[RMDB]
An RNA of 177 nucleotides, treated with 2A3 and DMS and read out base by base. 2A3 is a SHAPE reagent: it acylates the 2'-hydroxyl of flexible nucleotides of all four kinds. Source: RMDB library M2PK50, as collected in RNAgym. DMS adducts were read by reverse transcription with MarathonRT. 2A3 adducts were read by reverse transcription with SuperScript II with manganese. The RNA was probed in 150 mM KOAc, 10 mM MgCl2 and 150 mM bicine (pH 8.5) at 24 C.

RNA sequence: GGGAACGACUCGAGUAGAGUCGAAAACUUCCAGCGUUCGCGCUGGAAGAAAGGCCGAGUAGUGUUGGGUCCCGAAAGGCCAUAAAUCAACAAUCACUCAGAAAAUCGGUAUCUUCGGAUACCGAAACACUCGAAAUGAGUUCGCUCAUUUCGAGUGAAAAGAAACAACAACAACAAC
Reactivity to 2A3 in 0.01 (KOAc 150mM, MgCl2 10mM, bicine 150mM(pH8.5), 24C), signal-to-noise 1, nucleotides 027 to 126: c000u020u000c010c000a010g010c000g040u080u060c120g000c030g000c110u010g010g020a000a000g020a020a010a030g020g010c020c010g000a020g000u040a020g000u020g080u050u050g080g020g190u020c020c000c010g030a050a020a010g010g010c010c000a000u110a010a060a030u060c030a000a060c040a010a120u140c060a020c070u010c000a030g160a110a180a040a080u050c010g000g000u000a000u010c010u030u000c100g150g000a000u000a000c000c020g020a000a000a000
Reactivity to DMS in 0.01 (KOAc 150mM, MgCl2 10mM, bicine 150mM(pH8.5), 24C), signal-to-noise 1, nucleotides 027 to 126: c000u000u000c000c000a010g040c010g020u000u000c240g020c030g080c000u010g000g020a020a000g000a010a080a070g020g010c000c000g030a090g020u000a060g040u000g030u000u000g000g000g020u000c000c020c000g010a040a040a240g000g010c010c010a040u010a020a030a070u000c050a040a050c060a070a100u010c110a030c020u000c080a160g000a070a120a120a110u000c000g010g010u000a000u000c000u000u000c260g040g020a030u000a000c010c000g010a000a040a030